[RMDB]
RNA sequence: GGGAACGACUCGAGUAGAGUCGAAAAGGGGUCCAAGCAUGCCAGAGGUCUAGACAUGAGCUGAAGCCUCCACGGCUCAACAGCUAGACUACCCACCUGGCGGGCUUGGACGGAGGCACCCAAAACGGAUAGUUUGGUUUCGACCAAACUAUCCGAAACGAACUAUGUUCUUCGGAACAUAGUUCGUAAAAGAAACAACAACAACAAC
Reactivity to DMS in 0.01 (KOAc 150mM, MgCl2 10mM, bicine 150mM(pH8.5), 24C), signal-to-noise 1, nucleotides 027 to 156: g060g030g020g020u000c020c010a000a140g030c000a030u010g000c050c000a050g000a160g020g010u000c000u000a050g000a030c060a200u000g000a000g030c000u000g000a070a190g000c000c000u000c050c030a300c120g020g040c000u000c000a100a050c060a140g000c030u000a010g000a050c030u010a010c000c000c000a300c050c030u000g000g030c000g000g010g000c000u000u000g000g040a020c070g000g020a060g040g000c030a060c010c000c000a050a100a130a230c020g000g000a010u010a000g040u010u030u010g060g010u000u000u020c300g000a030c020c010a000a000a010c000u000a000u010c010c000g010a010a060
Reactivity to 2A3 in 0.01 (KOAc 150mM, MgCl2 10mM, bicine 150mM(pH8.5), 24C), signal-to-noise 1, nucleotides 027 to 156: g030g000g000g020u000c000c000a000a000g000c020a000u040g020c000c010a020g010a010g020g050u000c000u000a000g010a100c080a270u260g000a030g000c010u030g040a130a000g010c000c000u000c000c020a020c020g000g000c010u010c030a080a180c050a040g070c020u010a010g000a000c020u020a040c100c110c010a070c000c020u030g000g000c000g000g010g000c000u000u000g000g000a000c010g000g000a000g000g000c000a040c000c000c010a010a090a020a020c030g000g010a000u000a000g010u000u020u000g060g040u070u100u070c300g100a030c020c000a010a000a000c000u000a000u000c000c000g000a000a000
The record gives the reactivity of an RNA of 207 nucleotides to DMS and 2A3.
The DMS profile rests on 1,564 reads.
The 2A3 profile rests on 2,961 reads.
DMS adducts were read by reverse transcription with MarathonRT.
The RNA was probed in 150 mM KOAc, 10 mM MgCl2 and 150 mM bicine (pH 8.5) at 24 C.